[RMDB]
RNA sequence: GGGAACGACUCGAGUAGAGUCGAAAAAACAACUGCACAGUUGUGUCCAUUCCUCCACUUCGCAUUCCCUCAGCAUUUAGGGACUUGGCUUUGUGCUGUUUUGUUUAGAUUUUGAGAAUGUUCUGAAGAGUAGAGAUGACACAGGGUAAAGAUAGGAUAUAAUAUGCGACUUCGGUCGCAUAUUAUAAAAAGAAACAACAACAACAAC
Reactivity to 2A3 in 0.01 (KOAc 150mM, MgCl2 10mM, bicine 150mM(pH8.5), 24C), signal-to-noise 1, nucleotides 027 to 156: a000a000c040a000a000c000u100g000c100a010c030a140g010u040u020g000u030g090u070c080c010a130u140u060c020c000u010c050c010a090c090u090u020c030g030c060a080u080u000c010c000c000u040c030a050g000c030a100u160u140u090a020g000g000g010a040c000u120u080g100g000c000u030u020u090g030u080g000c000u000g050u010u090u020u010g060u050u090u000a080g000a110u130u140u040u080g030a070g050a100a030u010g030u130u030c030u010g090a110a060g020a010g050u060a000g040a000g000a030u130g010a020c000a000c000a030g000g000g080u090a140a090a000g060a080u110a090g060g000a040
Reactivity to DMS in 0.01 (KOAc 150mM, MgCl2 10mM, bicine 150mM(pH8.5), 24C), signal-to-noise 2, nucleotides 027 to 156: a080a000c020a020a030c030u000g000c140a110c030a090g040u000u000g010u010g020u010c070c030a160u020u010c030c010u010c030c020a070c030u000u000c070g010c050a110u000u000c010c000c010u020c050a110g000c060a120u000u000u000a060g000g030g000a070c080u010u000g030g020c000u000u030u010g010u010g010c010u000g000u010u000u000u000g020u010u020u000a070g000a190u010u010u000u030g010a130g010a090a080u000g040u000u000c080u000g000a070a080g000a090g000u010a050g000a120g020a040u000g010a080c050a110c040a040g020g020g000u010a080a060a060g010a100u000a080g010g000a300